RNA sequence: GGGAACGACUCGAGUAGAGUCGAAAAUACAUUAUACACCUGUAUGUGGAUAUGUAACAGUGAGUCAUAGUAGAAAUAAAUUGUCUAAACACAAUAGUUAUGGAAGAUAAAAUAAUUCAAAAUAUCACUAUCAAGGUUCUUUCGAGAACCUUGAUAGAAAAGAAACAACAACAACAAC
Reactivity to 2A3 in 0.01 (KOAc 150mM, MgCl2 10mM, bicine 150mM(pH8.5), 24C), signal-to-noise 4, nucleotides 027 to 126: u070a000c010a020u040u110a050u200a060c070a040c000c110u130g100u150a080u160g020u070g040g040a010u030a010u070g010u000a090a090c020a050g010u020g210a040g020u080c090a070u040a070g140u080a050g210a110a130a020u160a040a110a010u050u080g000u000c060u060a050a300a000c050a020c020a050a140u100a100g070u120u070a030u090g060g000a020a020g060a060u150a050a080a030a040u200a030a060u120u030c100a120a000a010a090u090a000u030c030a000
Reactivity to DMS in 0.01 (KOAc 150mM, MgCl2 10mM, bicine 150mM(pH8.5), 24C), signal-to-noise 2, nucleotides 027 to 126: u040a030c020a010u090u000a010u020a140c050a100c020c170u030g030u020a100u060g050u010g000g000a000u010a020u000g000u000a060a070c130a030g020u030g000a040g010u020c040a090u010a030g000u030a040g000a030a070a050u000a050a080a030u010u030g010u000c010u000a060a080a170c190a020c100a040a090u010a060g000u000u040a050u020g000g000a050a140g000a030u030a050a040a010a110u060a100a050u010u000c030a010a000a090a110u030a080u040c040a090